[RMDB]
Structure probing data (2A3) for a 207-nucleotide construct. The data come from the RNA Mapping Database (RMDB), library OK3TST. Conditions: 150 mM KOAc, 10 mM MgCl2 and 150 mM bicine (pH 8.5), 24 C.
RNA sequence: GGGAACGACUCGAGUAGAGUCGAAAACAGCCGGGAGCUUUGGCAAGACUCACGUCUCUAACAACCGAGCUCCCCAAGUGAGCAAGUCCUGUCCCUUUUAUGGGCUCAGGACUCUAAGGGGGUCCGUGUGAGAGGACCGUGAUGGAUUGAUCAAGCACUCCACUAUGGGAUUCGUCCCAUAGUGGAGAAAAGAAACAACAACAACAAC
Reactivity to 2A3 in 0.01 (KOAc 150mM, MgCl2 10mM, bicine 150mM(pH8.5), 24C), signal-to-noise 1, nucleotides 027 to 156: c050a020g100c050c060g040g000g050a080g000c050u260u220u300g070g000c010a020a000g030a030c000u010c020a020c010g070u000c020u010c020u080a100a080c050a010a120c050c000g010a040g000c020u110c000c000c000c020a010a120g110u050g090a020g020c110a060a050g000u000c000c030u010g000u030c000c000c000u000u150u110u230a200u300g000g030g000c020u010c000a000g000g000a000c000u000c000u080a070a060g010g010g000g000g010u000c040c000g050u090g000u000g050a060g010a020g000g020a030c070c030g000u000g020a040u180g010g070a040u020u040g000a020u140c000a010a000g060c000a040